[RMDB]
RNA sequence: GGGAACGACUCGAGUAGAGUCGAAAAUGACAACCCAUUGGCCGCUCUGCUGGCUAUUGGACAGCACUGCCACCGGUAUGGCUGCUGGUGGCUCGACCAAUAACCUCGGUAUGAGUAAUAUUGCUGCUAUGGUAGGCGAUUUCGAUCGCCUACCAUAAAAAGAAACAACAACAACAAC
Reactivity to 2A3 in 0.01 (KOAc 150mM, MgCl2 10mM, bicine 150mM(pH8.5), 24C), signal-to-noise 1, nucleotides 027 to 126: u080g020a040c020a020a080c040c000c010a030u030u150g100g010c060c010g000c040u000c010u070g000c000u060g010g040c010u050a020u000u070g010g050a000c010a070g070c040a110c120u090g000c000c000a000c000c030g000g020u090a130u170g200g060c130u020g000c000u010g030g020u000g000g000c000u000c000g020a020c010c000a010a000u040a010a060c020c120u080c130g060g000u090a100u210g040a040g090u050a030a170u150a060u120u250g050c040u030g020c040
Reactivity to DMS in 0.01 (KOAc 150mM, MgCl2 10mM, bicine 150mM(pH8.5), 24C), signal-to-noise 1, nucleotides 027 to 126: u020g020a240c180a130a190c030c010c040a190u010u000g040g040c020c130g000c070u010c020u010g000c010u020g010g000c080u000a000u000u010g000g000a120c110a080g020c150a130c210u000g050c000c000a020c020c010g010g040u000a050u010g030g010c210u000g000c000u010g000g030u000g000g000c050u000c080g010a110c000c010a080a000u000a030a020c070c020u000c130g040g010u000a070u030g030a060g000u010a100a160u010a030u010u000g010c040u000g040c130
The record gives the reactivity of an RNA of 177 nucleotides to 2A3 and DMS. The data come from the RNA Mapping Database (RMDB), library OK2TRN. For DMS the reverse transcriptase was MarathonRT. For DMS, 861 sequencing reads were counted.